[RMDB]
RNA sequence: GGGAACGACUCGAGUAGAGUCGAAAAAAACCUACAUGGGUAUAGUCGAGCACAACAAGGCGCUAUCAGACAUUUCAAGCAAGGCGAUUGAAAGACUGCAAGAGAGCUUCAAAGCAAGUGAACGCGCUCUUGAUGUACUGAAAUCAGCACGCGACGCGUCUAAGUGCUAGUUCGCUAGCACUUAGACAAAAGAAACAACAACAACAAC
Reactivity to 2A3 in 0.01 (KOAc 150mM, MgCl2 10mM, bicine 150mM(pH8.5), 24C), signal-to-noise 2, nucleotides 027 to 156: a000a000a000c090c020u110a080c110a150u180g060g060g000u060a090u080a140g000u070c060g020a020g060c060a070c030a070a080c030a100a060g060g040c070g000c040u020a060u090c000a010g030a050c030a040u000u080u140c040a040a040g040c020a090a160g140g000c010g060a030u000u010g000a010a000a000g010a020c050u110g030c120a020a000g020a000g000a000g030c010u020u030c030a070a070a170g050c000a010a210g070u050g070a040a010c070g020c000g000c050u000c000u030u010g030a060u030g040u060a140c010u040g020a020a020a050u070c050a020g050c030a000c040g020c050g110a040c040g000c080
Reactivity to DMS in 0.01 (KOAc 150mM, MgCl2 10mM, bicine 150mM(pH8.5), 24C), signal-to-noise 1, nucleotides 027 to 156: a080a050a090c040c020u000a120c140a060u000g010g010g040u000a030u000a080g000u000c030g010a070g060c090a140c070a140a050c160a060a110g030g030c000g020c040u010a050u000c060a130g040a170c020a160u000u030u050c060a020a090g080c030a100a210g030g000c040g000a110u000u000g000a170a120a010g060a190c010u000g000c000a020a030g010a030g020a030g020c000u030u000c030a020a070a120g000c270a070a130g000u000g000a030a030c060g090c000g010c000u000c010u000u000g000a040u000g010u000a010c030u010g000a030a030a080u000c100a100g020c090a120c090g040c050g010a030c080g050c110